[RMDB]
About this RNA
An RNA of 177 nucleotides, treated with DMS and 2A3 and read out base by base. For DMS the reverse transcriptase was MarathonRT. It was measured as part of the RMDB library OK1LIB.
RNA sequence: GGGAACGACUCGAGUAGAGUCGAAAAGAUUUUAUUGUUUGAACUUUAUGGUGCUGUUUCUGCUGUUACAUGGUUCAUGUUUGAGUGGAAUGGGUCAUCUACCGUGUGGUGAUUCUCGAACGGCUCAGGACGAACAAUCGUUCGCGGUUGUUCGUCCAAAAGAAACAACAACAACAAC
Reactivity to DMS in 0.01 (KOAc 150mM, MgCl2 10mM, bicine 150mM(pH8.5), 24C), signal-to-noise 2, nucleotides 027 to 126: g030a030u010u010u010u010a000u050u000g000u000u000u020g000a110a080c030u000u010u000a140u010g000g020u010g000c020u020g010u000u000u000c040u000g040c030u000g010u040u030a010c080a000u000g010g020u030u020c040a050u020g040u000u010u000g000a060g030u020g010g020a070a090u010g000g000g000u000c030a000u000c020u060a020c090c090g080u000g020u000g000g000u020g000a020u000u000c020u000c230g000a050a080c030g000g020c010u000c020a160
Reactivity to 2A3 in 0.01 (KOAc 150mM, MgCl2 10mM, bicine 150mM(pH8.5), 24C), signal-to-noise 3, nucleotides 027 to 126: g040a030u070u170u060u150a120u160u160g120u040u030u050g080a080a020c020u050u070u010a140u180g010g000u060g010c000u020g000u020u030u000c000u030g080c030u000g080u170u010a010c000a010u030g120g110u060u120c040a010u040g060u030u030u050g100a030g000u010g010g010a070a090u070g050g000g040u020c010a050u010c030u030a100c000c000g050u060g020u020g090g000u010g000a020u050u000c010u000c040g020a020a010c050g000g000c000u000c020a020